The record gives the reactivity of an RNA of 177 nucleotides to 2A3 and DMS.
RNA sequence: GGGAACGACUCGAGUAGAGUCGAAAACGUCGCAGCACGUGCUGAUGACGAAGGCUUCAUCACAUUAAAGAACAAUCUAUAUAGAUUGGUUUGGCAUGUUGAGCGUAAAGACGUUCCAUAUCCUAAGGCAUGGAAAAAGGUUCGCCUUUUUCCAUGCAAAAGAAACAACAACAACAAC
Reactivity to 2A3 in 0.01 (KOAc 150mM, MgCl2 10mM, bicine 150mM(pH8.5), 24C), signal-to-noise 2, nucleotides 027 to 126: c000g010u000c030g000c010a020g000c010a030c180g150u260g010c040u010g000a250u070g010a000c020g020a060a050g040g000c020u060u040c010a090u060c010a050c000a030u050u180a070a010a020g050a020a020c000a010a000u010c000u020a150u010a040u070a300g020a000u000u040g020g000u030u000u030g010g000c030a000u000g050u040u090g070a030g050c020g050u020a040a100a020g020a050c010g010u000u000c000c000a050u030a060u090c000c030u030a070a020g120
Reactivity to DMS in 0.01 (KOAc 150mM, MgCl2 10mM, bicine 150mM(pH8.5), 24C), signal-to-noise 1, nucleotides 027 to 126: c050g030u000c010g010c030a030g000c010a120c300g000u010g030c010u000g010a080u000g010a010c000g020a120a150g000g000c040u010u030c040a090u010c020a080c110a040u020u000a130a210a070g000a010a060c000a010a010u000c000u000a170u040a080u030a010g000a000u000u010g000g000u000u000u000g000g120c210a030u030g010u010u000g000a030g010c060g000u010a080a030a090g010a060c000g050u010u000c080c000a030u020a080u000c030c010u020a100a070g000

It was measured as part of the RMDB library 15KREP. For 2A3 the reverse transcriptase was SuperScript II with manganese.